[RMDB]
RNA sequence: GGGAACGACUCGAGUAGAGUCGAAAAGAUAUGGAACCAGAGAAGGGAGUUCGAAGUGCCGAAGAACAAGCUCGGAAACGAGCUUGGGAGGCAUGUAUGAACAUCGAUCUUCUCUGGUUCCUAAGUCGUUUAUGUUAUAGUUCGCUAUAACAUAAACAAAAGAAACAACAACAACAAC
Reactivity to DMS in 0.01 (KOAc 150mM, MgCl2 10mM, bicine 150mM(pH8.5), 24C), signal-to-noise 6, nucleotides 027 to 126: g000a080u020a300u010g000g010a020a000c000c000a010g000a020g020a020a020g000g000g010a060g020u000u000c000g000a120a300g020u000g010c000c000g010a140a170g010a150a180c000a000a010g010c000u000c000g000g000a120a110a190c000g010a010g010c000u000u000g010g000g010a100g000g020c000a000u000g000u010a160u010g000a010a000c010a260u010c190g000a070u010c000u000u000c000u000c000u000g000g000u000u000c000c000u000a020a100g010u000c130
Reactivity to 2A3 in 0.01 (KOAc 150mM, MgCl2 10mM, bicine 150mM(pH8.5), 24C), signal-to-noise 5, nucleotides 027 to 126: g060a010u160a080u220g000g000a010a000c000c000a000g000a010g000a020a000g050g010g020a080g010u020u010c020g050a170a030g010u000g010c000c020g240a300a040g010a050a020c000a000a000g000c020u020c000g010g030a070a110a050c020g010a010g010c000u000u000g000g010g000a010g000g000c090a020u300g040u090a070u260g000a010a010c010a040u300c020g020a030u000c000u010u010c000u000c000u000g000g000u000u000c000c000u000a010a000g000u010c040
Structure probing data (DMS and 2A3) for a 177-nucleotide construct. The reactions ran in a buffer of 150 mM KOAc, 10 mM MgCl2 and 150 mM bicine (pH 8.5), at 24 C. The data come from the RNA Mapping Database (RMDB), library TTRINS.